[RMDB]
RNA sequence: GGGAACGACUCGAGUAGAGUCGAAAAAAUGAAAGAACAAGCUAAAGCAGUUGAUGUGAUUGAUGCGAUAUUGAGAACUUUCCAAUGGAUUGCAGAUACGGGCAGUGAAAUUGUCGCCACUGGGUCUUUAGCACCUAUUUUGUACGAUGAUGCAACAGCUCUAUGAUCAGUUCGCUGAUCAUAGAGCAAAAGAAACAACAACAACAAC
Reactivity to 2A3 in 0.01 (KOAc 150mM, MgCl2 10mM, bicine 150mM(pH8.5), 24C), signal-to-noise 1, nucleotides 027 to 156: a000a000u200g020a020a030a060g010a060a020c080a020a020g030c020u170a090a010a000g060c040a070g000u100u000g050a110u020g030u040g020a100u080u080g010a000u020g040c100g030a020u000a050u130u130g020a030g000a120a010c060u070u140u000c020c000a020a040u060g060g000a050u060u020g000c000a060g010a060u020a040c050g010g000g090c010a060g010u000g050a000a060a250u070u090g030u020c010g020c040c000a030c040u010g000g070g060u050c000u010u120u090a040g000c000a010c000c000u030a060u110u060u040u060g020u020a020c050g000a060u100g020a050u050g050c020a040a020c000a190
Reactivity to DMS in 0.01 (KOAc 150mM, MgCl2 10mM, bicine 150mM(pH8.5), 24C), signal-to-noise 1, nucleotides 027 to 156: a020a100u000g050a060a050a150g000a060a110c040a070a160g010c060u000a060a050a100g040c020a100g010u000u000g030a060u010g000u010g040a170u010u000g030a040u010g040c060g030a100u000a050u000u000g020a160g020a130a080c050u000u010u030c050c000a050a080u000g020g000a120u000u000g000c120a130g000a160u000a080c030g040g000g050c030a040g020u000g000a080a070a120u000u010g060u000c050g010c010c010a120c140u000g000g050g020u000c020u000u000u000a100g070c040a050c000c020u000a080u000u000u000u000g010u010a060c000g040a070u000g060a020u000g000c040a020a090c040a090